This 177-nucleotide RNA was probed chemically with 2A3 and DMS. High 2A3 reactivity points to a flexible backbone, as in loops and unpaired stretches.

RNA sequence: GGGAACGACUCGAGUAGAGUCGAAAAGAAGAAGCAACAAUGAACUACUCAUCGCUCAAGAAAAACCUCAUCAUUAAGUUUAGUAACUGUGGGAGUAGGUCCCAAAAUGAGGAAGCCAAAGGGGCCACCUAGGAUAGGCGUUCGCGCCUAUCCUAGGAAAAGAAACAACAACAACAAC
Reactivity to 2A3 in 0.01 (KOAc 150mM, MgCl2 10mM, bicine 150mM(pH8.5), 24C), signal-to-noise 2, nucleotides 027 to 126: g190a000a040g040a040a020g050c010a010a070c040a000a300u190g000a070a030c020u070a010c000u090c000a130u150c040g060c000u030c020a030a030g090a110a250a010a020a000c020c000u010c000a100u020c060a040u160u180a080a000g010u050u080u220a080g060u020a030a080c030u000g010u000g050g000g010a100g010u090a060g000g040u010c000c000c000a030a120a000a060u110g020a040g020g000a040a000g120c040c020a170a000a000g000g000g000g070c000c000a000
Reactivity to DMS in 0.01 (KOAc 150mM, MgCl2 10mM, bicine 150mM(pH8.5), 24C), signal-to-noise 2, nucleotides 027 to 126: g040a110a030g020a050a070g020c010a020a010c080a040a080u050g010a050a090c040u000a020c080u010c000a090u030c060g060c010u020c120a130a040g020a020a060a140a020a030c000c000u000c010a020u000c090a060u040u020a070a100g000u000u020u020a090g000u020a080a040c010u010g020u060g010g040g020a070g000u000a030g010g000u000c000c000c040a050a020a090a000u000g000a050g000g000a120a110g040c010c080a000a030a150g000g000g040g000c000c070a120
It was measured as part of the RMDB library OK1LIB.